[RMDB]
RNA sequence: GGGAACGACUCGAGUAGAGUCGAAAACAUGUUGACCAAACCACAGAUGUGUGGAUCAUCGGCGAUGAAGCCAUGGGCGUGUGGUUCGUUUGGUGAACUGGACGCACCGGACAGUGUUGUUCGGUGGAGUGAAUCAGGGGAAAGCUGGCAGGCGGCCGAUGACAACAAACUUCGGUUUGUUGUCAUCAAAAGAAACAACAACAACAAC
Reactivity to DMS in 0.01 (KOAc 150mM, MgCl2 10mM, bicine 150mM(pH8.5), 24C), signal-to-noise 1, nucleotides 027 to 156: c040a090u010g010u000u000g000a080c040c020a100a110a130c010c020a060c040a110g000a090u010g000u020g020u000g000g000a150u000c020a030u000c050g010g060c070g030a100u010g000a120a180g000c000c010a080u000g060g000g010c040g060u000g040u000g000g030u000u000c010g000u000u020u000g050g050u000g050a080a030c000u000g010g010a040c050g000c020a050c000c000g040g020a030c000a090g050u040g030u020u000g020u000u030c090g000g020u000g040g010a120g070u010g010a060a100u010c030a110g020g000g030g010a080a060a170g000c070u010g060g020c000a050g040g020c110g040g030c070c090
Reactivity to 2A3 in 0.01 (KOAc 150mM, MgCl2 10mM, bicine 150mM(pH8.5), 24C), signal-to-noise 3, nucleotides 027 to 156: c070a060u150g030u040u060g070a030c030c020a030a040a000c020c000a030c020a070g160a190u150g100u040g020u030g160g000a030u080c030a050u010c030g100g010c050g080a100u060g110a150a030g010c050c020a030u050g040g050g000c050g030u100g020u020g030g000u050u060c030g020u050u070u110g060g010u090g030a050a040c000u010g020g040a030c040g010c060a010c010c000g000g030a010c050a070g130u170g050u300u130g010u000u110c000g000g020u020g000g020a040g010u080g050a050a030u060c040a040g010g030g000g040a020a110a010g020c020u030g030g000c000a020g050g000c030g020g000c040c010

The record gives the reactivity of an RNA of 207 nucleotides to DMS and 2A3.
For DMS the reverse transcriptase was MarathonRT.
Conditions: 150 mM KOAc, 10 mM MgCl2 and 150 mM bicine (pH 8.5), 24 C.
For 2A3 the reverse transcriptase was SuperScript II with manganese.